[RMDB]
RNA sequence: GGGAACGACUCGAGUAGAGUCGAAAAAGGAAGGGAAGUGUGGAAACUGGUUUGUCAAGGGCCACCCAGUGUGGGCUCAGGAAGAGAAGGAAUGUGACUGAGGCUGGGUGUGGCAGAGGAGAGCACAGUGAGCUCUCAUUUUCGAAUGAGAGCUCACAAAAGAAACAACAACAACAAC
Reactivity to DMS in 0.01 (KOAc 150mM, MgCl2 10mM, bicine 150mM(pH8.5), 24C), signal-to-noise 2, nucleotides 027 to 126: a110g000g000a060a030g030g020g010a060a160g000u020g000u010g060g010a100a120a080c090u020g000g000u010u010u000g000u030c100a210a070g000g030g010c030c000a080c040c000c020a060g020u030g040u000g000g000g000c010u000c080a040g080g000a070a060g000a080g020a120a060g040g010a060a120u100g020u000g000a140c020u000g000a020g000g000c050u000g000g000g000u010g030u030g020g010c080a100g020a080g000g000a070g040a060g000c110a030c120a120
Reactivity to 2A3 in 0.01 (KOAc 150mM, MgCl2 10mM, bicine 150mM(pH8.5), 24C), signal-to-noise 2, nucleotides 027 to 126: a000g080g000a010a020g030g010g010a040a000g040u030g020u060g080g040a070a050a050c060u040g040g070u120u070u060g090u070c030a020a070g040g020g050c000c000a000c000c000c000a020g000u100g050u180g170g160g050c000u000c020a000g040g020a020a030g080a020g100a200a000g090g130a080a060u100g020u050g150a020c050u080g000a020g070g000c020u000g010g000g000u030g020u030g070g000c000a000g010a000g030g050a140g000a010g020c000a000c000a000

Source information:
Conditions: 150 mM KOAc, 10 mM MgCl2 and 150 mM bicine (pH 8.5), 24 C. The record gives the reactivity of an RNA of 177 nucleotides to DMS and 2A3. 2A3 is a SHAPE reagent: it acylates the 2'-hydroxyl of flexible nucleotides of all four kinds. Reactivities are given for positions 27 through 126. It was measured as part of the RMDB library RFM100.